An RNA of 207 nucleotides, treated with DMS and 2A3 and read out base by base. The reactions ran in a buffer of 150 mM KOAc, 10 mM MgCl2 and 150 mM bicine (pH 8.5), at 24 C. It was measured as part of the RMDB library OK3TST. DMS (dimethyl sulfate) methylates the pairing face of unpaired adenines and cytosines. Values cover nucleotides 27 to 156. 2A3 adducts were read by reverse transcription with SuperScript II with manganese. DMS adducts were read by reverse transcription with MarathonRT.

RNA sequence: GGGAACGACUCGAGUAGAGUCGAAAAUUAAACCCUAUAACUAUCUUCUGAAUGGGAGGCUCCAAGAGCUGCAGUGACUUGUUCCAGGUGACAUUUGCAGGGAAUCGGUGAGGGAGUUGAGAUCCCAGCCUGUGUCUAGUUUGACUCAUCACCGCAACGAGUAAUUUUAGUUCGCUAAAAUUACUCGAAAAGAAACAACAACAACAAC
Reactivity to DMS in 0.01 (KOAc 150mM, MgCl2 10mM, bicine 150mM(pH8.5), 24C), signal-to-noise 1, nucleotides 027 to 156: u010u000a070a080a110c010c010c010u010a080u000a100a150c100u000a060u000c020u000u000c060u000g000a170a090u010g000g020g010a150g020g030c030u010c030c030a120a130g000a120g020c030u000g000c060a140g020u000g010a100c050u000u010g020u000u010c070c030a150g010g000u000g020a030c080a050u000u000u000g020c020a090g010g010g000a090a080u000c060g010g010u000g000a110g010g020g010a030g010u010u000g030a080g000a110u000c000c000c000a160g000c030c020u010g030u000g010u000c030u010a080g010u000u000u000g010a120c030u040c030a080u000c040a020c030c010g020c050a110a220
Reactivity to 2A3 in 0.01 (KOAc 150mM, MgCl2 10mM, bicine 150mM(pH8.5), 24C), signal-to-noise 2, nucleotides 027 to 156: u140u050a010a040a060c000c010c030u060a070u040a130a070c050u070a110u140c050u100u040c050u090g100a170a070u070g020g030g000a010g030g040c040u100c060c070a130a080g030a040g100c040u040g040c020a020g010u010g080a020c020u050u120g070u150u100c020c010a010g080g020u040g070a050c020a080u150u160u040g000c000a010g030g000g060a100a070u090c040g000g040u010g020a060g020g180g000a040g000u050u070g040a050g000a070u020c000c000c030a010g010c020c030u080g030u020g020u040c000u020a060g050u020u110u120g020a040c000u010c020a050u050c040a030c000c030g040c010a100a050